The data come from the RNA Mapping Database (RMDB), library OK3TST. The record gives the reactivity of an RNA of 207 nucleotides to 2A3 and DMS. For DMS, 4,300 sequencing reads were counted.
RNA sequence: GGGAACGACUCGAGUAGAGUCGAAAAAAAGGGGACAGAAAAAAGAGGCUAUUGAACCAAUCCAAGGAGAGAGAAGUGGGCAAGGAGAAUAUACUGGACUGAUCCUGAGGGAUGUCAACAUCGUGCAAGAAGAGUCUGUGAUUUGGGCAGAACCUUAAAUUAAAUGCUAUUUCGAUAGCAUUUAAUUAAAAGAAACAACAACAACAAC
Reactivity to 2A3 in 0.01 (KOAc 150mM, MgCl2 10mM, bicine 150mM(pH8.5), 24C), signal-to-noise 3, nucleotides 027 to 156: a020a000a030g060g000g020g020a040c070a080g140a080a130a000a010a020a010g020a040g020g000c020u070a050u120u110g030a040a030c050c030a030a030u040c030c010a050a030g050g000a030g000a000g010a000g020a130a000g040u090g010g000g000c040a030a010g020g010a030g020a060a000u120a010u030a090c030u050g020g030a020c010u040g040a050u040c000c030u030g020a080g040g040g000a020u040g040u060c020a030a050c000a080u080c050g030u050g050c010a040a020g050a040a000g000a060g070u000c010u060g020u030g040a100u050u060u060g040g000g000c010a030g010a060a030c000c000u050u060a060
Reactivity to DMS in 0.01 (KOAc 150mM, MgCl2 10mM, bicine 150mM(pH8.5), 24C), signal-to-noise 3, nucleotides 027 to 156: a020a050a080g040g010g000g030a150c080a150g010a020a080a090a120a100a070g020a060g030g020c040u000a070u000u000g010a130a090c010c010a070a160u000c040c030a090a130g010g020a110g010a140g030a100g000a070a070g020u000g000g010g040c090a060a060g010g000a100g000a070a090u000a100u010a090c040u020g000g020a110c060u000g000a120u000c030c030u010g020a090g000g010g000a050u010g000u000c040a050a060c050a070u000c040g040u000g000c010a050a130g000a050a100g000a080g020u000c020u000g050u010g000a110u000u010u000g010g010g010c030a090g000a030a300c050c030u000u000a080